Annotation:
An RNA of 177 nucleotides, treated with 2A3 and DMS and read out base by base. In probing experiments dimethyl sulfate is read out at A N1 and C N3, which are open when not base-paired. Conditions: 150 mM KOAc, 10 mM MgCl2 and 150 mM bicine (pH 8.5), 24 C.

RNA sequence: GGGAACGACUCGAGUAGAGUCGAAAAGGUAUUCCUUAUCUAUCUAAUACGUUGAGUUAUCUGGAACCUGUCCCAUUACGUUCUCGCCAGAGAGCGUAAUAAGACAGGUUCUGCGUUUAGUUGCCGCUUUGAGUAUUACUUUCGAGUAAUACUCAAAAAAAGAAACAACAACAACAAC
Reactivity to 2A3 in 0.01 (KOAc 150mM, MgCl2 10mM, bicine 150mM(pH8.5), 24C), signal-to-noise 4, nucleotides 027 to 126: g120g020u090a090u080u150c010c020u040u060a110u050c010u020a060u010c020u040a080a110u110a190c070g040u010u140g060a060g060u120u070a110u150c070u070g020g000a010a000c000c000u000g000u000c000c010c010a010u010u000a000c000g010u000u000c010u010c050g110c180c090a030g000a000g010a000g000c000g020u000a000a000u020a030a000g020a010c000a000g000g000u000u010c010u000g000c010g000u020u010u060a100g010u020u070g080c030c000g030c060
Reactivity to DMS in 0.01 (KOAc 150mM, MgCl2 10mM, bicine 150mM(pH8.5), 24C), signal-to-noise 9, nucleotides 027 to 126: g000g010u010a120u010u010c040c040u000u000a090u010c040u000a120u010c030u010a070a080u010a090c060g010u010u010g000a090g010u000u010a070u010c090u000g010g000a010a000c000c000u000g000u000c000c070c110a060u000u000a000c000g000u000u000c000u000c000g010c300c300a150g000a010g010a010g000c000g010u000a000a000u000a060a120g000a010c000a000g000g010u000u000c000u000g010c110g010u000u000u010a080g010u000u000g010c060c040g010c180